Annotation:
This 170-nucleotide RNA was probed chemically with DMS and 2A3.
[RMDB]
RNA sequence: GGGAACGACUCGAGUAGAGUCGAAAAACCUGUGAGUGGAAGCCCGCUUUAUUCACUGGGGUCGACAGCUCUGGGGAGAAAAGGGAGGAUCGGAUGGGAAGAGUAUAUCCCAUGGGAAUCCCUGGGUAAGCGCCUUGGUUCGCCAAGGCGAAAAGAAACAACAACAACAAC
Reactivity to DMS in 0.01 (KOAc 150mM, MgCl2 10mM, bicine 150mM(pH8.5), 24C), signal-to-noise 2, nucleotides 027 to 129: a030c020c010u000g080u090g010a080g060u020g000g000a180a120g010c030c000c050g000c080u050u020u020a070u030u000c050a060c060u000g000g000g000g000u010c050g000a120c220a110g000c070u010c010u020g030g040g000g000a120g000a130a110a070a020g000g040g020a060g000g000a000u040c060g060g010a050u020g000g000g000a040a110g010a150g050u000a100u000a110u050c000c000c010a040u030g020g020g010a270a040u000c020c000c020u040g000g000g000u040a080a030g000
Reactivity to 2A3 in 0.01 (KOAc 150mM, MgCl2 10mM, bicine 150mM(pH8.5), 24C), signal-to-noise 4, nucleotides 027 to 129: a000c010c000u040g030u060g090a060g000u020g000g030a050a010g060c020c010c000g070c030u100u180u090a180u060u100c040a060c140u100g000g000g000g020u060c040g030a060c030a030g010c020u000c000u070g040g000g020g000a050g000a030a080a000a010g040g010g000a040g020g000a040u050c030g030g000a000u050g000g000g000a060a000g070a020g030u120a020u020a030u100c000c020c030a010u040g030g000g010a050a120u070c020c000c000u010g010g010g020u060a050a010g050

The 2A3 profile rests on 5,471 reads. High 2A3 reactivity points to a flexible backbone, as in loops and unpaired stretches.